About this RNA: This 207-nucleotide RNA was probed chemically with 2A3 and DMS. Source: RMDB library OK3TST, as collected in RNAgym.
RNA sequence: GGGAACGACUCGAGUAGAGUCGAAAACACGAUCACCGAGCAGGACGGCGAGGUCGACAUGCACACGAUCCUCAACGCGCCCAACGCGUUAGCGCUGGAGUUCGGACACCAACCGUCUGGUGCGUUCGGCCCUUCUGGUCGCUUCGCCGGAAGGCAGCGACAACGGGGAAUUCGUUCCCCGUUGUCGAAAAGAAACAACAACAACAAC
Reactivity to 2A3 in 0.01 (KOAc 150mM, MgCl2 10mM, bicine 150mM(pH8.5), 24C), signal-to-noise 5, nucleotides 027 to 156: c110a010c060g050a080u130c040a020c070c020g010a020g020c010a010g010g060a000c010g000g010c020g010a020g000g040u060c010g030a060c050a160u260g060c060a040c000a010c070g020a070u150c010c000u050c030a040a040c020g000c010g010c010c040c030a050a060c020g020c000g060u090u120a070g000c040g010c090u040g010g030a140g040u120u110c020g020g030a030c050a040c040c020a050a050c020c010g070u050c050u090g060g050u080g030c040g020u060u030c010g030g020c010c010c010u040u050c030u050g040g010u080c040g030c120u110u170c070g010c010c000g000g030a020a030g030g000c020a030g060
Reactivity to DMS in 0.01 (KOAc 150mM, MgCl2 10mM, bicine 150mM(pH8.5), 24C), signal-to-noise 2, nucleotides 027 to 156: c070a060c070g000a170u000c030a300c000c000g010a160g060c050a130g000g020a070c020g000g020c030g020a040g000g010u010c000g010a080c090a130u000g000c040a140c080a140c050g000a020u000c010c020u010c050a100a080c030g010c020g030c050c020c050a050a190c030g020c000g050u000u000a090g120c010g020c000u020g050g010a100g020u000u000c020g010g020a080c020a060c030c020a060a040c050c010g000u020c010u000g030g020u000g020c030g000u010u000c030g030g000c060c010c030u000u000c080u010g000g020u000c020g000c060u000u000c010g020c000c010g030g000a040a080g000g020c030a100g020